[RMDB]
RNA sequence: GGGAACGACUCGAGUAGAGUCGAAAAGAUUCCUCGUUGUUGAGCGAGGUUUAAACAAAUCGACCACACAAACGUAGAGCCGACUACGGAUUUAUAAAUUAAGGCAUUAAGUGUGAUAAGGAGACUAAAAACGAUGUUGUGUUCGCACAACAUCGAAGUAGUGCAAAGUGUUCGCACUUUGCACUACAAAAGAAACAACAACAACAAC
Reactivity to 2A3 in 0.01 (KOAc 150mM, MgCl2 10mM, bicine 150mM(pH8.5), 24C), signal-to-noise 4, nucleotides 027 to 156: g050a080u170u110c000c000u000c000g000u000u030g010u000u010g000a000g000c000g000a000g000g000u070u100u060a010a010a010c030a010a000a000u000c000g000a000c010c000a000c000a000c000a040a170a000c000g000u000a000g000a020g050c000c010g040a010c000u000a000c010g000g000a010u000u300u030a150u080a110a020a020u130u160a000a000g000g020c000a000u090u190a120a080g000u010g000u020g020a010u030a070a050g120g030a060g040a050c060u140a040a000a040a060a080c000g000a000u000g000u000u000g000u000g030u050u050c170g000c050a000c010a000a000c000a000u000c000g000a010a000
Reactivity to DMS in 0.01 (KOAc 150mM, MgCl2 10mM, bicine 150mM(pH8.5), 24C), signal-to-noise 2, nucleotides 027 to 156: g000a300u010u010c000c010u010c070g020u000u010g020u000u000g010a220g030c010g020a110g000g000u000u020u000a060a020a120c070a050a070a160u000c010g010a060c000c020a000c000a180c020a150a090a150c040g000u000a020g000a300g000c000c040g000a090c020u000a010c010g010g010a260u000u000u000a030u000a020a010a050u000u010a030a070g000g000c030a300u010u000a030a140g010u010g020u000g020a090u000a120a130g000g010a190g040a060c050u000a020a080a120a080a150c030g010a010u000g020u000u000g040u000g020u000u000c230g000c030a020c020a000a010c000a010u000c020g030a040a080